[RMDB]
RNA sequence: GGGAACGACUCGAGUAGAGUCGAAAACGUCUACAGUUCGCUGUAGACGAAAGGCGCGGCACCGUCCGCGGAACAAACGGGCCCAUACAAAUAUUAAAAUAAAAAGAUGAUGGUUCGCCAUCAUCAACAUAGAAGCAAACUUCGGUUUGCUUCUAUGAAAAGAAACAACAACAACAAC
Reactivity to 2A3 in 0.01 (KOAc 150mM, MgCl2 10mM, bicine 150mM(pH8.5), 24C), signal-to-noise 2, nucleotides 027 to 126: c000g010u000c000u000a000c010a000g000u020u110c210g020c070u020g000u000a000g010a000c000g020a010a010a000g040g010c000g000c000g020g000c030a010c110c030g120u140c000c000g030c000g080g270a040a020c010a010a050a000c030g040g050g030c000c030c000a020u130a110c020a040a180a040u250a130u300u300a180a090a020a110u280a040a080a000a040a020g000a020u000g000a000u000g000g070u020u030c200g050c040c000a000u000c000a000u010c000a000a000
Reactivity to DMS in 0.01 (KOAc 150mM, MgCl2 10mM, bicine 150mM(pH8.5), 24C), signal-to-noise 1, nucleotides 027 to 126: c000g020u000c000u000a000c000a000g000u000u010c170g050c000u000g020u000a000g030a000c040g020a020a040a220g050g020c040g010c000g040g000c030a300c050c050g000u000c000c040g020c010g080g020a030a140c110a030a010a040c020g020g030g020c030c040c020a080u020a110c120a060a030a090u000a040u000u000a030a000a130a130u060a060a110a130a110a100g000a010u000g000a000u000g010g020u000u030c270g010c020c000a010u030c020a000u010c000a030a170
About this RNA: An RNA of 177 nucleotides, treated with 2A3 and DMS and read out base by base. It was measured as part of the RMDB library M2PK50. 2A3 adducts were read by reverse transcription with SuperScript II with manganese. DMS adducts were read by reverse transcription with MarathonRT. 2A3 is a SHAPE reagent: it acylates the 2'-hydroxyl of flexible nucleotides of all four kinds. The RNA was probed in 150 mM KOAc, 10 mM MgCl2 and 150 mM bicine (pH 8.5) at 24 C. The 2A3 profile rests on 1,629 reads.